Chemical mapping of a 177-nucleotide RNA with DMS and 2A3.
[RMDB]
RNA sequence: GGGAACGACUCGAGUAGAGUCGAAAAGAUAUGGACCUAGAGCUUCAUCGAUCGUCUGUAUGGUCGCUAUGGUCGGAAACGACCAUAAAAGUCCAUACAGACGGGAGAAGCGAUUGGGUCCUAAGUCGUUCCGUACAAAGUUCGCUUUGUACGGAACAAAAGAAACAACAACAACAAC
Reactivity to DMS in 0.01 (KOAc 150mM, MgCl2 10mM, bicine 150mM(pH8.5), 24C), signal-to-noise 2, nucleotides 027 to 126: g010a130u000a300u000g000g000a000c010c010u000a070g000a300g000c020u000u010c000a280u000c220g010a100u000c010g000u000c000u000g010u000a000u000g020g020u010c020g020c300u000a000u000g000g010u010c000g020g000a130a160a270c000g010a020c000c000a000u000a010a100a160a120g000u000c010c000a000u000a000c000a010g000a010c000g000g010g000a060g010a020a020g020c000g000a190u010u000g000g000g000u000c010c000u000a040a160g010u000c100
Reactivity to 2A3 in 0.01 (KOAc 150mM, MgCl2 10mM, bicine 150mM(pH8.5), 24C), signal-to-noise 1, nucleotides 027 to 126: g080a040u200a120u220g020g020a000c040c100u200a030g000a060g180c020u080u000c040a300u300c070g210a120u100c000g020u000c020u000g020u000a020u000g000g000u000c040g000c180u010a000u020g030g000u050c000g000g060a050a120a040c010g020a030c000c000a000u000a000a050a000a000g000u010c000c020a000u000a020c000a030g000a000c010g000g020g000a040g000a010a010g000c010g070a160u220u210g000g040g000u000c010c000u000a070a040g050u040c100

The RNA was probed in 150 mM KOAc, 10 mM MgCl2 and 150 mM bicine (pH 8.5) at 24 C.